[RMDB]
RNA sequence: GGGAACGACUCGAGUAGAGUCGAAAAGCUAUGUUAUGAUGGUGUGAACCAUCAUAGUGUUAGGUACUCGACUAACACACAUAGAUCGAGUAGUGUUCUGUUGUGGUCUACAGCACAACAACCUGAGGAGUGAUCCUCAGGUGAACACAGAUGUAGACGUAGCUUGCAAGUUCGCUUGCAAGCUACGAAAAGAAACAACAACAACAAC
Reactivity to 2A3 in 0.01 (KOAc 150mM, MgCl2 10mM, bicine 150mM(pH8.5), 24C), signal-to-noise 2, nucleotides 027 to 156: g070c020u050a010u070g010u050u020a000u000g000a000u000g010g030u040g110u140g090a130a050c000c000a010u010c010a000u000a000g000u010g040u050u050a020g000g050u040a030c010u000c040g010a000c030u040a200a000c100a010c000a020c030a210u160a030g200a100u020c020g000a000g040u070a070g080u020g040u130u000c000u010g010u010u000g000u000g000g000u010c000u030a010c000a010g000c030a000c000a020a010c000a000a010c000c000u000g000a000g000g000a000g030u080g040a150u020c010c000u000c000a000g000g000u000g000a000a000c060a000c020a080g080a120u010g010u020a000g010a000
Conditions: 150 mM KOAc, 10 mM MgCl2 and 150 mM bicine (pH 8.5), 24 C. The record gives the reactivity of an RNA of 207 nucleotides to 2A3. The data come from the RNA Mapping Database (RMDB), library OK3TST. 2A3 adducts were read by reverse transcription with SuperScript II with manganese. For 2A3, 1,269 sequencing reads were counted.